[RMDB]
RNA sequence: GGGAACGACUCGAGUAGAGUCGAAAAAGAAGAAUUGGUGUGAAUCGAUUCUACAUUGAAGAAAGAAUCGAAUAUUCAUUGAUCAAACCAUUCACUCCAUAGUCUGAUAGAUCUUUUGAAGAACUGAUUAAUCGGACGAGAAUAAAGAUAGAGUCCCCUUUCAGGAUAUGUUCGCAUAUCCUGAAAGAAAAGAAACAACAACAACAAC
Reactivity to 2A3 in 0.01 (KOAc 150mM, MgCl2 10mM, bicine 150mM(pH8.5), 24C), signal-to-noise 4, nucleotides 027 to 156: a000g080a060a020g010a060a060u110u070g010g000u020g000u000g040a010a020u040c000g010a000u000u010c010u030a050c060a120u170u300g100a070a110g050a070a270a010g000a000a030u000c010g000a020a040u060a090u120u080c070a030u050u200g080a070u140c090a050a020a040c040c010a000u020u020c020a010c040u000c020c000a060u060a050g010u000c010u010g000a010u020a130g040a010u020c000u070u100u060u100g210a180a110g030a100a020c020u030g010a020u020u070a080a030u010c010g010g030a010c010g010a010g010a050a040u170a090a060a000g070a050u120a040g090a010g100u010c010c000c000
Reactivity to DMS in 0.01 (KOAc 150mM, MgCl2 10mM, bicine 150mM(pH8.5), 24C), signal-to-noise 3, nucleotides 027 to 156: a080g010a220a120g000a060a040u000u000g020g030u000g000u020g000a090a090u000c030g020a020u000u000c000u000a070c120a170u020u000g010a160a150g010a180a150a120g000a020a020u000c070g030a070a030u000a120u000u000c050a120u000u010g000a130u000c040a070a070a090c030c030a110u000u000c040a130c020u000c010c040a110u020a180g000u000c020u010g030a070u000a300g020a030u000c010u000u000u010u000g010a100a140g010a030a060c060u000g010a070u010u010a130a060u010c020g010g020a010c020g000a090g000a060a100u000a060a040a130g000a170u000a120g000a190g010u000c000c020c010
An RNA of 207 nucleotides, treated with 2A3 and DMS and read out base by base. 2A3 adducts were read by reverse transcription with SuperScript II with manganese. The data come from the RNA Mapping Database (RMDB), library ARCHII. The DMS profile rests on 3,673 reads. Conditions: 150 mM KOAc, 10 mM MgCl2 and 150 mM bicine (pH 8.5), 24 C. For DMS the reverse transcriptase was MarathonRT.